RNA sequence: GGGAACGACUCGAGUAGAGUCGAAAAUGUCAUAAAAGGAAACAGGCCAAGAACUGCAGUAGGAAUAUUGGGGUAACAUCGGGGUCUGAGUUCUGAGUUAGUUUCCAUGUAUCGCUGCCCUGUUGGCAAUAUCAUGAUGGUUCGCCAUCAUGAUAUUAAAAGAAACAACAACAACAAC
Reactivity to DMS in 0.01 (KOAc 150mM, MgCl2 10mM, bicine 150mM(pH8.5), 24C), signal-to-noise 9, nucleotides 027 to 126: u030g010u020c090a090u040a040a070a100a120g000g010a030a040a050c030a110g010g020c030c030a080a050g000a060a080c040u010g010c020a010g010u010a030g010g050a130a100u010a040u020u000g000g000g000g010u010a040a080c140a150u010c040g000g020g000g000u010c040u010g000a060g000u000u000c010u010g010a110g000u010u010a060g000u000u000u010c000c000a080u020g010u010a050u020c050g010c030u000g000c010c030c030u010g000u000u010g000g010c090
Reactivity to 2A3 in 0.01 (KOAc 150mM, MgCl2 10mM, bicine 150mM(pH8.5), 24C), signal-to-noise 7, nucleotides 027 to 126: u120g020u040c030a040u150a130a150a030a030g060g010a030a060a040c020a070g130g010c030c010a080a020g030a060a000c040u110g040c050a040g020u130a060g060g170a090a080u090a090u130u120g030g020g010g050u080a040a020c010a100u080c040g020g030g020g030u030c050u060g060a070g050u020u000c010u020g020a020g020u020u050a030g000u000u030u000c010c000a020u070g040u050a040u090c050g000c050u070g040c000c010c020u040g020u050u060g040g010c030